[RMDB]
The data come from the RNA Mapping Database (RMDB), library OK2TST.
The record gives the reactivity of an RNA of 177 nucleotides to 2A3 and DMS.
For DMS, 5,386 sequencing reads were counted.
RNA sequence: GGGAACGACUCGAGUAGAGUCGAAAAAGCCAUCAGGACGGAUUUCUAAUGUGCCUUCUCCGUAAAUUGCUUGAUUAUUUUCCGCGAAUUUUUUGAGGAUCGCAAACAUCAUAUCCUGUUUGCGCAGUAUAAAGUACGUCUUCGGACGUACUUUAUAAAAAGAAACAACAACAACAAC
Reactivity to 2A3 in 0.01 (KOAc 150mM, MgCl2 10mM, bicine 150mM(pH8.5), 24C), signal-to-noise 1, nucleotides 027 to 126: a000g030c020c020a000u050c030a020g000g060a000c050g040g020a060u040u000u150c040u200a140a040u130g050u120g050c010c050u020u060c050u010c030c010g000u000a060a070a030u040u050g040c020u010u100g090a040u070u210a100u120u120u050u000c040c020g030c090g100a120a170u140u040u050u040u010u300g060a050g050g070a080u060c010g030c010a000a010a010c000a030u130c000a020u040a090u220c030c030u000g000u000u000u000g000c020g000c010a000g030
Reactivity to DMS in 0.01 (KOAc 150mM, MgCl2 10mM, bicine 150mM(pH8.5), 24C), signal-to-noise 4, nucleotides 027 to 126: a100g010c030c020a020u010c070a060g010g010a050c160g000g000a100u010u000u010c040u000a070a070u010g010u000g010c000c030u000u000c040u000c010c070g020u010a050a060a070u000u000g010c060u000u010g010a070u000u000a090u010u000u000u000c020c070g010c100g030a050a030u010u000u000u000u000u020g010a110g010g010a080u010c030g000c000a020a020a010c020a030u000c090a070u010a110u010c110c100u000g000u010u000u000g000c010g000c180a090g000
DMS adducts were read by reverse transcription with MarathonRT. The reactions ran in a buffer of 150 mM KOAc, 10 mM MgCl2 and 150 mM bicine (pH 8.5), at 24 C. Values cover nucleotides 27 to 126. For 2A3 the reverse transcriptase was SuperScript II with manganese. Values are in units of 0.01, from 0 to 300, in steps of 10.